[RMDB]
RNA sequence: GGGAACGACUCGAGUAGAGUCGAAAACCAUAACAGUUCGCUGUUAUGGACUGUCGGAAUGCGGAAUAAAUAAUCGUCCGCUUACGAUUAAUACCGACUAUAAAGCGUAACACUUCGGUGUUACGAAGAGACUGAUUUAUUUCGAUAAAUCAGUCUCAAAAGAAACAACAACAACAAC
Reactivity to 2A3 in 0.01 (KOAc 150mM, MgCl2 10mM, bicine 150mM(pH8.5), 24C), signal-to-noise 8, nucleotides 027 to 126: c000c000a000u010a000a000c000a000g040u060u090c140g070c120u000g000u010u000a000u010g000g020a040c050u060g000u000c000g000g040a110a040u100g000c010g010g070a040a040u140a130a250a070u270a080a150u140c110g020u010c020c000g000c000u010u030a020c020g010a010u010u120a040a020u050a100c010c010g050a010c040u050a070u080a290a130a020g090c010g000u010a000a000c000a000c010u040u090c240g090g000u000g000u000u010a000c000g000a020a010
Reactivity to DMS in 0.01 (KOAc 150mM, MgCl2 10mM, bicine 150mM(pH8.5), 24C), signal-to-noise 6, nucleotides 027 to 126: c000c000a010u010a000a010c000a000g010u000u010c240g030c000u000g010u000u000a010u010g000g000a090c150u000g020u000c000g000g000a120a060u000g010c010g010g000a030a050u010a070a130a140u010a080a080u010c230g000u000c000c020g000c010u000u000a060c070g000a070u000u010a060a110u000a190c010c020g010a050c150u010a100u000a070a090a100g000c000g010u010a000a000c010a010c000u000u010c210g030g010u000g000u000u000a000c000g010a030a060